The record gives the reactivity of an RNA of 177 nucleotides to 2A3 and DMS. The RNA was probed in 150 mM KOAc, 10 mM MgCl2 and 150 mM bicine (pH 8.5) at 24 C. Values cover nucleotides 27 to 126. For 2A3, 7,418 sequencing reads were counted. For 2A3 the reverse transcriptase was SuperScript II with manganese. High DMS reactivity at an A or C suggests that its Watson-Crick edge is free.
[RMDB]
RNA sequence: GGGAACGACUCGAGUAGAGUCGAAAACUAGUGCCAUUCGUGGCACUAGAAGGGGUCCAGGCUGGAAAGGCUGGAGGUAUUGGAAUGGUCGGGCCGCCAUUCAAGGUACGCUAUUCGUAGCGUACAAGAGUGUCAGAUUUUUCGAAAUCUGACACUCAAAAGAAACAACAACAACAAC
Reactivity to 2A3 in 0.01 (KOAc 150mM, MgCl2 10mM, bicine 150mM(pH8.5), 24C), signal-to-noise 4, nucleotides 027 to 126: c000u000a000g000u000g000c000c010a010u030u040c260g110u080g000g030c000a000c000u000a010g000a020a010g000g020g020g010u000c010c000a020g060g090c020u070g120g200a190a090a020g080g030c010u010g010g010a000g020g010u170a200u140u280g130g010a000a000u010g010g000u010c030g000g010g000c000c000g000c000c000a000u000u010c020a020a010g180g000u010a000c010g000c000u020a020u030u120c190g110u010a000g000c000g000u000a000c000a000a010
Reactivity to DMS in 0.01 (KOAc 150mM, MgCl2 10mM, bicine 150mM(pH8.5), 24C), signal-to-noise 2, nucleotides 027 to 126: c000u000a000g010u000g000c000c000a040u000u010c240g020u000g010g000c000a010c000u000a000g000a090a090g000g000g010g000u000c010c010a030g000g000c010u010g000g020a120a150a030g000g010c020u000g010g000a010g010g000u000a100u010u000g010g000a020a010u000g000g010u000c010g000g010g000c000c010g010c000c010a010u000u000c020a160a100g000g000u000a010c000g010c000u000a020u000u010c200g010u000a000g020c000g000u000a000c000a040a080